RNA sequence: GGGAACGACUCGAGUAGAGUCGAAAAUGAAAGCUGUGUGAGCGAGGCGGGCGGAGGAUGAGGCCGUGCCCGGGCUCUGGCUGCACCCGCCCGGGGACACGCCGUGCACCCUCGGGCUCCGGAAAAAGGCUCACUUGUUAUUCGUAACAAGUGAGCCAAAAGAAACAACAACAACAAC
Reactivity to DMS in 0.01 (KOAc 150mM, MgCl2 10mM, bicine 150mM(pH8.5), 24C), signal-to-noise 1, nucleotides 027 to 126: u000g000a080a090a060g010c020u020g040u000g000u000g020a060g040c040g010a150g040g000c060g000g020g040c050g020g010a050g010g000a050u000g010a140g010g000c050c100g030u000g000c040c000c000g010g020g000c040u010c070u000g000g000c040u010g000c080a190c060c050c120g000c000c020c010g000g000g000g000a120c000a020c080g010c070c040g010u000g000c090a080c070c010c010u000c020g020g000g010c030u010c010c040g000g000a030a050a050a090a120

Source: RMDB library M2PK90, as collected in RNAgym. The record gives the reactivity of an RNA of 177 nucleotides to DMS. For DMS, 1,056 sequencing reads were counted.